This 177-nucleotide RNA was probed chemically with DMS and 2A3. It was measured as part of the RMDB library OK2TST. The DMS profile rests on 10,304 reads. The 2A3 profile rests on 5,832 reads. 2A3 adducts were read by reverse transcription with SuperScript II with manganese.
RNA sequence: GGGAACGACUCGAGUAGAGUCGAAAAGGACCGGGUCUUUGUGAAAAACCUCUUUAACGACAAUGUUAACAGCCAAUGAAGGUUAGAUCUUAUUGGUAGCAGUGUUUUAAUCCUACUCUUCAUUGUGACUGUAUCCCUAAUUCGUUAGGGAUACAGUAAAAGAAACAACAACAACAAC
Reactivity to DMS in 0.01 (KOAc 150mM, MgCl2 10mM, bicine 150mM(pH8.5), 24C), signal-to-noise 7, nucleotides 027 to 126: g010g010a110c090c100g000g000g000u000c050u000u000u000g020u010g010a060a060a040a100a080c050c020u000c060u000u000u000a040a060c080g020a080c110a060a060u010g010u000u000a060a070c220a160g000c060c010a010a020u000g010a020a020g010g000u000u020a110g000a090u010c030u000u000a040u000u000g000g010u010a050g020c060a040g010u000g000u000u000u010u000a070a130u010c030c010u000a060c100u000c060u010u000c050a060u000u000g010u010g010
Reactivity to 2A3 in 0.01 (KOAc 150mM, MgCl2 10mM, bicine 150mM(pH8.5), 24C), signal-to-noise 5, nucleotides 027 to 126: g030g010a020c050c060g070g010g020u040c070u050u140u090g090u070g060a070a030a020a030a060c010c010u030c010u060u090u030a060a030c030g130a040c080a090a070u130g000u050u060a100a040c030a050g010c000c010a030a030u060g090a060a020g030g000u070u100a040g010a120u050c010u030u050a040u050u060g020g000u020a020g020c030a020g010u000g060u130u080u030u120a030a040u040c000c000u010a050c030u020c010u120u080c030a080u080u140g110u070g090